[RMDB]
RNA sequence: GGGAACGACUCGAGUAGAGUCGAAAAAGGCCGAUCGCGCUAUCGAGCAGAGGAUCUGAGCGCUAGUGGCCGUGAUCUCAGGUACGCGCUGGCCGUCUGCAGCGCAGGCCGAUCGUACGCUAUGGCCGAAGAAAGCCUUUUUCGAAAGGCUUUCUUCAAAAGAAACAACAACAACAAC
Reactivity to DMS in 0.01 (KOAc 150mM, MgCl2 10mM, bicine 150mM(pH8.5), 24C), signal-to-noise 5, nucleotides 027 to 126: a150g010g010c030c010g000a090u010c110g010c110g020c030u010a080u000c090g010a180g020c000a040g010a160g020g000a070u000c050u010g010a020g020c020g020c020u000a150g010u010g010g020c010c000g020u000g000a100u000c120u000c090a170g010g010u000a160c060g000c010g010c010u000g000g000c030c020g000u000c020u000g000c000a040g000c030g010c120a120g010g000c000c010g000a050u000c040g000u000a070c120g010c050u000a100u000g000g010c050c030
Reactivity to 2A3 in 0.01 (KOAc 150mM, MgCl2 10mM, bicine 150mM(pH8.5), 24C), signal-to-noise 4, nucleotides 027 to 126: a000g030g000c030c010g050a090u090c070g010c010g000c070u040a060u280c090g040a040g010c030a010g030a040g070g030a140u110c060u300g180a030g020c010g000c020u060a040g120u190g170g010c010c000g010u030g050a160u050c120u020c070a020g010g010u020a010c020g000c000g000c000u030g000g010c030c020g190u060c000u030g040c010a070g100c000g000c010a000g000g010c000c020g000a020u040c030g020u080a100c040g000c030u040a080u190g060g000c040c060
The record gives the reactivity of an RNA of 177 nucleotides to DMS and 2A3. 2A3 adducts were read by reverse transcription with SuperScript II with manganese. The reactions ran in a buffer of 150 mM KOAc, 10 mM MgCl2 and 150 mM bicine (pH 8.5), at 24 C. In probing experiments dimethyl sulfate is read out at A N1 and C N3, which are open when not base-paired. It was measured as part of the RMDB library OK2TRN.